[RMDB]
RNA sequence: GGGAACGACUCGAGUAGAGUCGAAAACGUGCAGCACCUGACCGCGCUGGACGGCACGCAGGACGGCGACAUUGUGAACCGGGGCAGCGGCACGCACGUGACGCGCUGGGCGGCCAUGGACGAGGCCUCUAUUUACAUGUUUCGACAUGUAAAUAGAAAAAGAAACAACAACAACAAC
Reactivity to 2A3 in 0.01 (KOAc 150mM, MgCl2 10mM, bicine 150mM(pH8.5), 24C), signal-to-noise 7, nucleotides 027 to 126: c020g010u040g020c030a040g010c020a040c040c030u070g070a080c030c020g020c010g000c050u040g050g090a040c020g020g010c050a020c060g010c030a040g040g070a040c030g040g000c020g020a020c040a100u120u180g050u040g070a050a040c020c010g020g000g030g000c040a070g010c010g030g000c020a000c040g050c010a040c080g030u030g020a020c030g020c010g000c080u060g020g040g020c000g000g010c010c010a060u060g030g010a020c040g020a030g030g020c000c000
Reactivity to DMS in 0.01 (KOAc 150mM, MgCl2 10mM, bicine 150mM(pH8.5), 24C), signal-to-noise 9, nucleotides 027 to 126: c050g020u000g010c030a070g010c040a100c040c030u000g010a110c090c080g000c070g010c030u000g010g000a090c060g000g010c070a070c070g010c060a080g010g010a110c060g010g010c040g010a120c080a080u000u000g010u000g010a090a110c050c020g010g000g000g010c060a070g020c030g000g000c040a050c070g010c100a050c090g010u000g000a070c050g010c040g020c040u000g000g000g010c050g010g010c020c020a060u010g010g010a070c070g000a120g010g010c050c050

Conditions: 150 mM KOAc, 10 mM MgCl2 and 150 mM bicine (pH 8.5), 24 C. Chemical mapping of a 177-nucleotide RNA with 2A3 and DMS. 2A3 is a SHAPE reagent: it acylates the 2'-hydroxyl of flexible nucleotides of all four kinds. The data come from the RNA Mapping Database (RMDB), library OK2TST.